[RMDB]
RNA sequence: GGGAACGACUCGAGUAGAGUCGAAAAUUGCUCUCUCCUUUCAUACAGUCAGCUGGUCCCUCUCCUCAGGUGUAGACCACCUAUUAUCAUUUUACCUGUUUUGAUUCUCUGAUGAGCAAAGUCCCAAGCAGUUAAGAAUAUUCGUAUUCUUAACUGCAAAAGAAACAACAACAACAAC
Reactivity to 2A3 in 0.01 (KOAc 150mM, MgCl2 10mM, bicine 150mM(pH8.5), 24C), signal-to-noise 9, nucleotides 027 to 126: u040u030g000c020u010c000u000c020u030c020c030u040u080u050c050a070u080a130c020a020g060u060c020a010g020c040u060g030g040u080c020c010c000u010c010u020c010c010u060c050a030g000g020u020g030u070a060g060a090c020c010a020c010c010u040a110u150u080a080u090c090a090u020u090u090u090a080c010c010u040g060u040u070u040u050g060a060u080u000c050u010c030u060g160a170u080g000a030g000c020a030a030a020g020u010c000c000c000a000a020
Reactivity to DMS in 0.01 (KOAc 150mM, MgCl2 10mM, bicine 150mM(pH8.5), 24C), signal-to-noise 9, nucleotides 027 to 126: u020u010g000c020u010c010u000c030u000c070c050u000u000u010c060a060u020a080c110a080g010u010c070a060g010c060u010g010g010u010c040c020c020u000c020u000c010c030u000c100a030g000g000u000g010u010a140g000a140c170c010a030c030c010u000a080u010u010a080u030c080a090u010u010u010u010a090c110c030u000g000u000u000u000u000g010a050u000u000c050u000c060u010g000a080u020g010a030g000c030a010a030a080g000u010c000c000c000a100a150

Description
Structure probing data (2A3 and DMS) for a 177-nucleotide construct. For 2A3 the reverse transcriptase was SuperScript II with manganese. The reactions ran in a buffer of 150 mM KOAc, 10 mM MgCl2 and 150 mM bicine (pH 8.5), at 24 C.